[RMDB]
RNA sequence: GGGAACGACUCGAGUAGAGUCGAAAAGAAUAUAAGAGCGCAGUAAAUGUGAGAGCAAACUGCGCCCGGACUGUAGGAUCCGGUGGCACAGCAACGCUCACUCACAACACGCUGUGCCACGUGAAGAAAAUACUGCCACCUUCGGGUGGCAGUAUUUAAAAGAAACAACAACAACAAC
Reactivity to 2A3 in 0.01 (KOAc 150mM, MgCl2 10mM, bicine 150mM(pH8.5), 24C), signal-to-noise 1, nucleotides 027 to 126: g010a040a090u180a000u020a140a030g000a050g000c000g000c030a000g000u040a000a190a030u120g000u000g070a050g000a000g030c080a000a160a000c010u000g000c000g030c000c000c000g000g000a010c020u140g130u260a010g120g040a190u000c000c040g000g000u020g000g000c000a000c000a060g010c000a000a210c020g000c050u000c040a100c030u060c020a140c000a120a110c170a000c050g000c000u040g000u000g000c000c000a000c040g070u110g030a070a000g100a070
Reactivity to DMS in 0.01 (KOAc 150mM, MgCl2 10mM, bicine 150mM(pH8.5), 24C), signal-to-noise 1, nucleotides 027 to 126: g010a300a100u060a040u010a140a010g000a090g000c000g000c000a000g000u000a060a080a030u000g000u010g000a000g000a040g000c090a080a140a080c010u020g000c000g020c000c000c000g010g000a000c030u000g040u000a040g000g000a170u000c000c000g040g050u000g000g000c000a000c000a000g000c010a110a200c140g000c020u000c000a070c090u010c300a120c180a220a020c300a040c170g010c000u000g000u000g080c000c000a000c030g000u020g000a020a120g000a140
Description: Source: RMDB library OK1LIB, as collected in RNAgym. An RNA of 177 nucleotides, treated with 2A3 and DMS and read out base by base. For 2A3 the reverse transcriptase was SuperScript II with manganese. In probing experiments dimethyl sulfate is read out at A N1 and C N3, which are open when not base-paired. The RNA was probed in 150 mM KOAc, 10 mM MgCl2 and 150 mM bicine (pH 8.5) at 24 C.